This 207-nucleotide RNA was probed chemically with 2A3.
2A3 adducts were read by reverse transcription with SuperScript II with manganese.
The reactions ran in a buffer of 150 mM KOAc, 10 mM MgCl2 and 150 mM bicine (pH 8.5), at 24 C.
It was measured as part of the RMDB library RNAMAK.

[RMDB]
RNA sequence: GGGAACGACUCGAGUAGAGUCGAAAAUGCACCGUUUCGACGGUGCAAAAAAAGAUAUGGAACACCAAGAGCGAGGAUCGUGGACUCGGAAACGAGUCGUAACAUCGGGAGCUCGACGUGUUCCUAAGUCAAAAAUGGGUGCUUUCGAGCACCCAAAGUGGUGCGGAAGUUUCGACUUCCGCACCACAAAAGAAACAACAACAACAAC
Reactivity to 2A3 in 0.01 (KOAc 150mM, MgCl2 10mM, bicine 150mM(pH8.5), 24C), signal-to-noise 2, nucleotides 027 to 156: u070g010c000a000c010c000g010u030u090u070c220g070a050c030g000g000u000g020c000a010a000a000a000a000a000a060g020a010u010a010u010g010g000a000a000c000a010c010c010a050a040g000a000g010c010g020a160g030g030a010u020c010g010u080g130g020a000c000u000c000g020g000a010a010a010c010g000a000g020u010c010g000u030a010a030c030a070u190c030g000g000g030a050g010c000u010c010g000a010c010g000u000g000u000u000c000c000u000a000a000g010u010c010a000a000a050a000a120u130g050g000g010u000g010c010u040u090u080c050g040a010g000c010a000c020c000c010a000a040a000